[RMDB]
RNA sequence: GGGAACGACUCGAGUAGAGUCGAAAAGAUAUGGAGAUUACUUGUGCCAGAUCUGAUCGGAAACGAUCAGGAUCGGUAAUACAAGUUAAUCUCCUAAGUCAAAGCUUUCAUCUUCGGAUGAAAGCAAGUUCUAUUGAGACUUCGGUCUCAAUAGAACAAAAGAAACAACAACAACAAC
Reactivity to DMS in 0.01 (KOAc 150mM, MgCl2 10mM, bicine 150mM(pH8.5), 24C), signal-to-noise 2, nucleotides 027 to 126: g010a020u000a300u010g000g000a020g020a030u000u000a010c010u010u010g010u000g000c080c090a190g030a010u020c000u000g000a000u010c030g020g000a120a070a220c000g000a000u000c000a050g010g020a030u000c000g010g010u010a110a110u010a210c000a010a030g000u010u000a000a000u010c000u010c000c000u000a010a060g000u010c010a140a140a130g000c000u000u000u000c000a000u000c000u010u030c260g010g000a000u000g000a010a010a000g000c010a020a020
Reactivity to 2A3 in 0.01 (KOAc 150mM, MgCl2 10mM, bicine 150mM(pH8.5), 24C), signal-to-noise 3, nucleotides 027 to 126: g000a020u050a040u140g010g000a010g000a000u000u030a010c020u000u010g010u030g150c090c070a080g020a040u000c000u000g000a000u000c000g000g050a080a060a030c010g010a010u000c020a020g110g040a030u010c020g010g020u100a220a130u300a240c000a000a000g000u120u110a030a000u000c000u000c000c000u010a050a000g000u020c040a130a050a080g000c000u020u030u000c010a010u000c020u020u090c300g220g000a010u000g000a000a000a010g000c010a000a010